[RMDB]
RNA sequence: GGGAACGACUCGAGUAGAGUCGAAAACUUUGUUUAGAGGUAACAUAUUGGUGCCUGAGUCCAAAAGAUGGGCCAGAGUCUCUUGCGUCUCUAAUGACCAAAUAGUCAACCUCGCCAAUAUAAUGUCCGACGAUACAUAUUUCGAUAUGUAUCGUCGAAAAGAAACAACAACAACAAC
Reactivity to 2A3 in 0.01 (KOAc 150mM, MgCl2 10mM, bicine 150mM(pH8.5), 24C), signal-to-noise 4, nucleotides 027 to 126: c010u090u080u130g060u060u190u130a060g010a020g000g020u040a060a030c020a050u130a040u100u050g010g010u020g060c040c050u020g020a040g020u000c010c000a030a060a020a090g070a110u080g000g040g040c020c010a030g010a020g080u000c010u010c000u070u040g030c080g040u000c000u000c030u070a120a140u190g040a010c000c010a000a050a110u150a060g020u020c040a040a050c010c010u010c010g000c010c000a040a010u130a040u040a100a180u130g080u080c070
Reactivity to DMS in 0.01 (KOAc 150mM, MgCl2 10mM, bicine 150mM(pH8.5), 24C), signal-to-noise 4, nucleotides 027 to 126: c050u010u010u000g000u000u000u000a090g010a040g020g010u010a190a030c040a040u010a030u000u000g010g030u000g010c190c120u000g010a070g010u010c040c010a010a040a050a040g010a040u000g000g010g000c060c100a050g000a160g010u000c020u000c040u000u000g010c180g000u000c010u000c040u010a070a090u010g010a030c000c000a010a010a040u000a020g000u000c100a070a050c020c010u010c000g030c130c100a050a050u010a050u000a090a090u010g020u010c080